RNA sequence: GGGAACGACUCGAGUAGAGUCGAAAAGAUAUGGAGCCAUGAUGCGAUAAGGACGAAGGUCGGAAACGAUGUUGACGUCCUUUUGACGCAUAUGGCUCCUAAGUCAAAAGAUACGUUCGCGUAUCAACCCAGGUAAUUACUUCGGUAAUUACCUGGGAAAAGAAACAACAACAACAAC
Reactivity to DMS in 0.01 (KOAc 150mM, MgCl2 10mM, bicine 150mM(pH8.5), 24C), signal-to-noise 2, nucleotides 027 to 126: g000a010u000a300u000g000g010a010g020c000c000a000u000g030a000u000g000c000g030a120u000a020a030g000g020a010c010g010a300a080g000g000u000c010g010g000a100a140a210c020g010a010u000g020u020u010g000a290c030g000u000c000c000u000u000u010u000g010a140c070g000c010a000u000a040u010g000g000c000u000c000c000u000a010a050g010u020c030a100a050a110a150g010a010u000a000c000g020u000u000c300g040c000g040u010a010u000c010a070a110
Reactivity to 2A3 in 0.01 (KOAc 150mM, MgCl2 10mM, bicine 150mM(pH8.5), 24C), signal-to-noise 2, nucleotides 027 to 126: g030a000u040a050u220g000g000a000g090c000c020a070u280g100a040u000g200c040g020a070u030a100a030g010g010a010c010g010a070a020g130g030u020c090g030g000a010a020a030c000g020a020u050g170u300u110g190a160c020g020u010c000c000u000u010u000u070g050a010c000g000c000a010u000a010u030g000g000c010u000c000c010u000a000a000g000u030c010a000a000a060a100g040a000u000a000c020g040u040u120c300g000c020g130u010a010u000c020a020a130
This 177-nucleotide RNA was probed chemically with DMS and 2A3. Conditions: 150 mM KOAc, 10 mM MgCl2 and 150 mM bicine (pH 8.5), 24 C. Reactivities are given for positions 27 through 126.